[RMDB]
Structure probing data (2A3 and DMS) for a 207-nucleotide construct. It was measured as part of the RMDB library M2RFPK. The reactions ran in a buffer of 150 mM KOAc, 10 mM MgCl2 and 150 mM bicine (pH 8.5), at 24 C. The DMS profile rests on 5,526 reads.
RNA sequence: GGGAACGACUCGAGUAGAGUCGAAAAAUGGUAGUUAGUCUACUCGCUAUCCUAGUUACUUUGGAGUAAUCUAAAGUGUGUGUAAACGGGCGACAGUCUGUAAAAUACUGGGGACAUAGGGUCAACAAGAACUAGUAGACCUUCGGGUCUACUAGAACUAUCCCUUAUCGUUCGCGAUAAGGGAUAGAAAAGAAACAACAACAACAAC
Reactivity to 2A3 in 0.01 (KOAc 150mM, MgCl2 10mM, bicine 150mM(pH8.5), 24C), signal-to-noise 4, nucleotides 027 to 156: a010u080g020g020u020a030g020u090u060a070g070u060c050u050a030c010u030c020g030c010u050a060u080c000c000u040a050g030u080u070a020c030u050u010u050g030g010a030g010u130a120a090u000c000u020a020a010a030g010u020g010u020g000u010g060u080a080a070a060c040g010g000g010c020g020a050c040a060g020u000c010u010g080u070a030a040a060a040u100a070c040u050g000g000g000g010a010c020a060u100a050g050g000g020u040c020a030a020c020a130a040g070a060a030c000u000a000g000u000a010g000a000c000c000u010u030c130g040g000g000u000c000u000a000c000u000a000g000a000a000
Reactivity to DMS in 0.01 (KOAc 150mM, MgCl2 10mM, bicine 150mM(pH8.5), 24C), signal-to-noise 3, nucleotides 027 to 156: a120u000g010g030u000a030g000u000u000a110g010u000c010u000a050c030u000c080g010c060u000a060u000c040c040u000a090g010u010u010a020c010u010u000u010g020g010a080g010u000a150a150u000c030u000a020a020a030g020u010g020u010g030u010g000u020a060a150a050c060g020g000g020c020g010a150c270a040g020u000c040u000g030u000a040a090a080a090u010a040c020u000g010g010g030g010a100c040a120u010a070g000g020g030u000c060a050a090c070a050a080g020a060a200c000u000a010g010u000a030g020a040c000c000u000u020c300g040g030g000u000c000u010a000c000u000a010g010a050a080